[RMDB]
RNA sequence: GGGAACGACUCGAGUAGAGUCGAAAAACACCAAAACUGAAAACGGAAGGCAAUCCUUCCACGACGAUACUGACUUUCCUUUGAUCGUCGUUACUACUGGCAUAGCCACAAAGGAGAACAAACAUGAGCGCGGACACUGACUUCGGUCAGUGUCCAACUUACUUAGACAGUUCGCUGUCUAAGUAAGAAAAGAAACAACAACAACAAC
Reactivity to 2A3 in 0.01 (KOAc 150mM, MgCl2 10mM, bicine 150mM(pH8.5), 24C), signal-to-noise 7, nucleotides 027 to 156: a000c070a080c030c020a050a040a030a060c130u240g050a080a080a030a060c060g000g000a000a000g030g000c150a040a200u230c010c010u000u010c000c000a000c000g000a000c000g000a000u150a230c020u100g100a060c030u120u130u060c030c010u110u040u060g020a010u000c000g000u010c010g000u020u030a030c040u020a030c020u020g010g000c040a230u100a130g020c010c010a030c040a040a040a010g050g010a040g030a070a040c040a100a080a020c070a110u190g060a060g080c150g010c110g040g000a000c000a000c000u000g010a000c000u020u050c180g050g000u000c000a000g000u000g000u000c000c000a000a000
Reactivity to DMS in 0.01 (KOAc 150mM, MgCl2 10mM, bicine 150mM(pH8.5), 24C), signal-to-noise 3, nucleotides 027 to 156: a100c060a200c050c020a080a060a080a270c090u000g000a110a040a080a090c050g030g000a050a000g080g000c060a100a090u000c010c010u010u020c020c010a070c010g000a010c010g010a050u000a080c110u000g060a140c080u000u000u010c080c050u000u000u020g010a050u000c000g020u000c010g020u000u000a020c050u010a060c010u020g030g000c020a170u000a110g030c020c030a090c060a080a090a110g000g000a130g030a100a120c080a060a120a110c040a080u010g000a120g010c090g060c130g030g020a060c020a010c000u010g020a020c000u000u000c290g090g020u010c010a000g020u010g030u000c000c000a010a010